[RMDB]
RNA sequence: GGGAACGACUCGAGUAGAGUCGAAAAGAAGAGAAGUGAGUAAACGCCUAUUCGGUAUAAGCACAGCCCGUCAAAAGGCGUGCGGCGAGGGCACCGGACGCUGUGCUUAUAACUGGGCCGUCGAAGACCAGUAGGCACUGUUCGCAGUGCCUACUGGAAAAGAAACAACAACAACAAC
Reactivity to 2A3 in 0.01 (KOAc 150mM, MgCl2 10mM, bicine 150mM(pH8.5), 24C), signal-to-noise 4, nucleotides 027 to 126: g120a040a000g120a000g020a130a010g060u140g050a040g020u110a030a080a020c030g000c020c020u100a160u090u220c060g020g000u010a000u010a000a010g010c000a010c000a010g000c040c070c010g020u050c040a090a120a020a030g150g050c100g020u010g000c000g020g050c130g050a150g040g130g020c030a020c030c000g020g000a040c070g010c010u000g000u010g000c000u000u010a000u000a010a020c010u030g000g020g010c090c030g020u030c040g010a040a000g050a060
Reactivity to DMS in 0.01 (KOAc 150mM, MgCl2 10mM, bicine 150mM(pH8.5), 24C), signal-to-noise 2, nucleotides 027 to 126: g020a090a080g000a080g010a110a170g020u010g000a080g060u040a020a080a070c100g000c000c020u010a090u000u010c150g040g010u010a000u000a020a010g020c000a030c000a020g000c080c070c040g060u000c060a050a010a110a110g010g010c130g050u000g000c000g010g000c070g000a100g020g000g030c010a050c040c000g030g000a050c050g010c010u000g010u000g000c010u000u000a010u000a030a060c010u020g020g010g020c040c030g020u000c020g000a050a090g010a290